[RMDB]
RNA sequence: GGGAACGACUCGAGUAGAGUCGAAAAAGUCUACUUUUCGAAGUAGACUGUGCUCCCACUUGAUCGAGGUCUCACGGUGUCAUUGCCCACGACACUCGGGCGUAAUAGAUUGGUUCGCCAAUCUAAAAACUGUAUAUUGCUUCGGCAAUAUACAGUUAAAAGAAACAACAACAACAAC
Reactivity to 2A3 in 0.01 (KOAc 150mM, MgCl2 10mM, bicine 150mM(pH8.5), 24C), signal-to-noise 2, nucleotides 027 to 126: a000g000u000c000u010a010c000u050u040u040u120c200g080a000a010g000u000a000g000a000c000u000g000u050g000c040u040c010c010c010a020c040u070u240g070a120u090c040g040a020g000g060u010c010u010c020a050c070g010g000u030g050u040c040a120u060u300g020c000c020c000a010c040g020a000c030a100c070u030c000g010g010g010c050g040u130a170a130u020a070g010a010u000u000g010g020u010u040c080g020c050c000a000a000u000c010u050a050a020a000
Reactivity to DMS in 0.01 (KOAc 150mM, MgCl2 10mM, bicine 150mM(pH8.5), 24C), signal-to-noise 7, nucleotides 027 to 126: a010g000u000c000u000a000c000u000u010u000u010c160g010a010a010g000u000a000g000a010c000u000g000u010g030c210u000c000c000c010a120c210u010u000g010a060u000c040g010a070g010g000u000c010u010c090a150c240g010g010u000g010u000c150a190u010u010g000c020c010c030a180c190g000a020c030a050c020u000c040g010g010g010c060g010u000a070a120u000a020g010a010u000u000g000g010u010u020c240g020c010c010a020a010u000c000u000a020a040a080
An RNA of 177 nucleotides, treated with 2A3 and DMS and read out base by base. Source: RMDB library M2PK50, as collected in RNAgym. The RNA was probed in 150 mM KOAc, 10 mM MgCl2 and 150 mM bicine (pH 8.5) at 24 C.